[RMDB]
RNA sequence: GGGAACGACUCGAGUAGAGUCGAAAACUUAAAUACCUACAGCUGGUCCUCAUAGGUGUUCCAUUGCAGUGCACUUUAGUGCCCUGGAUGGCACCUGGCCACCUGUCAGGUUUUUGUUAUUAAAAUCAACAUUCGUCAUUUUCGAAUGACGAAUGUUAAAAGAAACAACAACAACAAC
Reactivity to 2A3 in 0.01 (KOAc 150mM, MgCl2 10mM, bicine 150mM(pH8.5), 24C), signal-to-noise 3, nucleotides 027 to 126: c010u080u080a040a030a060u090a060c010c000u000a010c000a000g010c010u000g030g000u100c020c030u230c110a200u200a100g000g000u000g060u160u100c010c000a020u020u050g100c000a010g000u010g040c000a020c020u180u300u300a070g000u010g000c000c000c000u000g000g000a000u000g020g010c000a000c000c000u000g000g000c000c000a000c000c000u010g010u040c160a010g000g000u020u010u010u020u030g010u000u020a080u050u150a100a120a030a130u150c060
Reactivity to DMS in 0.01 (KOAc 150mM, MgCl2 10mM, bicine 150mM(pH8.5), 24C), signal-to-noise 3, nucleotides 027 to 126: c020u020u020a020a030a030u010a030c000c000u000a020c010a000g000c170u000g000g000u020c000c300u020c230a150u030a020g010g050u000g000u020u050c020c000a020u010u000g000c020a000g010u000g000c000a010c000u020u040u010a080g020u010g010c000c050c010u000g010g000a000u000g000g000c000a000c010c000u000g000g000c040c030a000c260c000u000g020u000c270a010g000g000u000u000u010u010u000g010u000u000a070u010u030a080a090a080a110u040c110